[RMDB]
RNA sequence: GGGAACGACUCGAGUAGAGUCGAAAAUCCUAGAGAGCUUGGCCGUCGGGCCUUAUACCCGACUUGCUGAGUUUCUCUAGGAGAGUCCCUUUCCCAGACCUGAGGCGGCUGGUCAAUAAAAGCCUCAAAAACUACCACUGGUUCGCCAGUGGUAGAAGACAUUUAUCAUGUUCGCAUGAUAAAUGUCAAAAGAAACAACAACAACAAC
Reactivity to 2A3 in 0.01 (KOAc 150mM, MgCl2 10mM, bicine 150mM(pH8.5), 24C), signal-to-noise 2, nucleotides 027 to 156: u010c000c000u000a000g010a000g000a010g000c000u000u010g020g010c010c030g020u000c000g000g040g010c030c020u030u100a150u080a020c000c010c010g000a020c000u030u110g000c010u020g000a000g010u020u300u020c000u030c010u000a000g010g000a000g000a000g030u040c000c000c000u000u090u010c010c000c000a020g000a050c000c030u030g030a010g010g000c030g000g030c040u020g060g120u130c070a030a050u070a220a090a020a010g010c000c000u000c000a090a020a030a000a000c000u000a000c000c000a000c000u010g020g040u040u070c110g050c060c000a010g000u000g000g010u010a000g000a000a000
Structure probing data (2A3) for a 207-nucleotide construct. For 2A3 the reverse transcriptase was SuperScript II with manganese. Conditions: 150 mM KOAc, 10 mM MgCl2 and 150 mM bicine (pH 8.5), 24 C.